This 207-nucleotide RNA was probed chemically with 2A3. Reactivities are rounded to 0.1 and cut off at 0 and 3. Source: RMDB library OK3TST, as collected in RNAgym. The RNA was probed in 150 mM KOAc, 10 mM MgCl2 and 150 mM bicine (pH 8.5) at 24 C.

[RMDB]
RNA sequence: GGGAACGACUCGAGUAGAGUCGAAAACGGCAAGGGCGGCCUGUACGGGCUGAUCUCGCAGACCACCGACGUCGCCGACCGUGCUUUCCGGCUGUCCUCGGAGGCGCUGCGCAAGUACUUCGCCGACCACCCCACCAACGACUACUUCCUGUCGGCGGUGAGCUGUAAGUUUCGACUUACAGCUCACAAAAGAAACAACAACAACAAC
Reactivity to 2A3 in 0.01 (KOAc 150mM, MgCl2 10mM, bicine 150mM(pH8.5), 24C), signal-to-noise 2, nucleotides 027 to 156: c000g020g030c060a050a040g060g000g050c030g030g020c000c040u080g100u160a130c160g050g010g000c050u060g030a100u030c090u070c050g010c000a000g020a030c000c000a010c030c000g020a010c010g000u060c000g000c010c000g020a040c000c050g110u120g150c110u140u110u120c070c000g010g000c070u180g060u060c000c060u020c020g020g010a030g010g000c210g000c100u000g020c000g000c050a050a000g010u030a030c010u010u030c070g020c010c000g020a020c040c050a080c000c000c040c000a050c020c010a110a040c050g030a010c020u160a060c020u210u030c040c050u090g010u030c000g030g040c080g010